[RMDB]
RNA sequence: GGGAACGACUCGAGUAGAGUCGAAAAGAUAUGGAUGCCGAUGAAGGCAAGGCGAAGUGUCGGAAACGACACCGCUGAUGACCUGGAGGCAUCCUAAGUCAAAGACGGAAACUUCGGUUUCCGUCAAGUUAGAGGGGCAGUUCGCUGCCCCUCUAACAAAAGAAACAACAACAACAAC
Reactivity to 2A3 in 0.01 (KOAc 150mM, MgCl2 10mM, bicine 150mM(pH8.5), 24C), signal-to-noise 1, nucleotides 027 to 126: g010a010u080a050u110g040g000a010u000g000c000c050g120a200u270g300a180a060g030g000c090a030a020g020g000c040g040a300a150g060u000g040u010c000g020g010a040a120a000c020g000a000c000a000c000c000g000c000u020g040a080u300g080a140c010c000u050g060g060a040g060g000c020a000u000c000c000u000a040a010g020u000c000a080a080a060g010a000c000g020g000a000a000a060c000u080u140c280g080g000u000u000u000c020c000g000u020c000a000a000
Reactivity to DMS in 0.01 (KOAc 150mM, MgCl2 10mM, bicine 150mM(pH8.5), 24C), signal-to-noise 3, nucleotides 027 to 126: g000a040u010a300u030g000g000a030u000g010c000c000g020a210u010g010a150a010g000g020c010a110a240g010g010c000g000a130a220g030u000g000u020c010g030g000a080a090a140c000g000a000c010a010c010c020g000c000u000g010a130u020g010a300c000c010u010g000g040a300g000g000c010a000u030c000c010u000a000a040g020u010c010a080a080a130g000a000c000g000g000a020a040a000c000u010u010c210g050g000u000u000u000c000c000g000u000c000a000a020

Background
This 177-nucleotide RNA was probed chemically with 2A3 and DMS. 2A3 adducts were read by reverse transcription with SuperScript II with manganese. Values are in units of 0.01, from 0 to 300, in steps of 10. The reactions ran in a buffer of 150 mM KOAc, 10 mM MgCl2 and 150 mM bicine (pH 8.5), at 24 C. For 2A3, 1,959 sequencing reads were counted. For DMS the reverse transcriptase was MarathonRT.